[RMDB]
RNA sequence: GGGAACGACUCGAGUAGAGUCGAAAAGAUAUGGACAUACUUAGGGAUCGAUACAUCGGAAACGAUGUCAUCGAGACGAUCUAAGGUAUGUCCUAAGUCAAAACGUAAGACCUUCGGGUCUUACGAACUCCGUCUAACACUUCGGUGUUAGACGGAGAAAAGAAACAACAACAACAAC
Reactivity to DMS in 0.01 (KOAc 150mM, MgCl2 10mM, bicine 150mM(pH8.5), 24C), signal-to-noise 1, nucleotides 027 to 126: g010a060u010a300u010g010g000a040c000a010u000a010c000u000u000a030g000g020g020a080u000c050g000a050u000a000c000a000u000c010g010g010a060a090a160c000g020a000u000g030u080c230a000u020c000g000a080g010a150c300g010a100u000c000u000a030a010g010g000u000a020u000g000u000c000c000u000a000a060g060u020c010a050a050a090a070c040g000u000a020a010g000a010c000c000u000u000c260g000g000g050u010c010u000u000a000c010g000a090a090
Reactivity to 2A3 in 0.01 (KOAc 150mM, MgCl2 10mM, bicine 150mM(pH8.5), 24C), signal-to-noise 1, nucleotides 027 to 126: g000a000u030a010u100g000g020a030c010a030u040a020c000u030u000a010g160g000g210a170u020c000g020a000u010a000c010a010u020c020g020g050a000a040a010c010g030a000u040g000u000c010a020u030c010g020a010g020a010c080g080a100u000c010u010a030a050g190g090u050a020u030g010u020c000c000u000a040a010g000u000c030a010a010a120a090c010g000u000a000a020g000a000c000c000u050u100c300g120g000g000u000c000u020u000a010c000g000a010a000

Record summary
Chemical mapping of a 177-nucleotide RNA with DMS and 2A3. The DMS profile rests on 954 reads. The RNA was probed in 150 mM KOAc, 10 mM MgCl2 and 150 mM bicine (pH 8.5) at 24 C. For 2A3, 2,940 sequencing reads were counted. High 2A3 reactivity points to a flexible backbone, as in loops and unpaired stretches. Source: RMDB library TTRDES, as collected in RNAgym. For DMS the reverse transcriptase was MarathonRT. Reactivities are rounded to 0.1 and cut off at 0 and 3. Values cover nucleotides 27 to 126.